[RMDB]
Conditions: 150 mM KOAc, 10 mM MgCl2 and 150 mM bicine (pH 8.5), 24 C. Structure probing data (DMS and 2A3) for a 177-nucleotide construct. Reactivities are given for positions 27 through 126. The 2A3 profile rests on 9,869 reads. High DMS reactivity at an A or C suggests that its Watson-Crick edge is free. For DMS, 6,075 sequencing reads were counted. DMS adducts were read by reverse transcription with MarathonRT.
RNA sequence: GGGAACGACUCGAGUAGAGUCGAAAAGGCACAGACGGACACUCCUUCUGACGUACAUUCUCACUCGCAUGGCGAGUCAGAGUCAUGACUGUGAGCGAGUACGAGUGAGGGUCAGUUCGAGUGUGCAGCAGACCUGACUAUUCGUAGUCGGGUCUGCAAAAGAAACAACAACAACAAC
Reactivity to DMS in 0.01 (KOAc 150mM, MgCl2 10mM, bicine 150mM(pH8.5), 24C), signal-to-noise 5, nucleotides 027 to 126: g000g010c070a030c030a050g020a150c060g000g000a050c020a210c070u000c000c020u000u000c000u000g010a110c020g020u000a050c080a100u000u010c000u000c050a050c000u000c080g000c010a030u010g000g010c000g010a080g000u000c100a050g000a190g020u000c070a040u000g010a030c040u000g000u010g000a080g020c100g000a100g010u000a050c050g010a040g010u000g010a080g000g010g000u000c060a060g010u000u000c120g000a050g020u000g010u000g000c040a100
Reactivity to 2A3 in 0.01 (KOAc 150mM, MgCl2 10mM, bicine 150mM(pH8.5), 24C), signal-to-noise 3, nucleotides 027 to 126: g050g020c030a010c010a020g180a030c040g000g000a000c000a000c020u030c010c000u000u000c010u020g060a020c000g030u050a000c010a060u020u010c010u000c010a000c000u030c010g000c010a000u050g030g010c020g050a020g120u030c030a030g020a020g120u040c010a040u020g030a050c000u020g000u000g020a010g010c000g010a020g000u010a010c020g010a010g020u050g000a020g030g000g020u030c030a040g000u000u000c000g010a020g020u010g000u000g000c010a000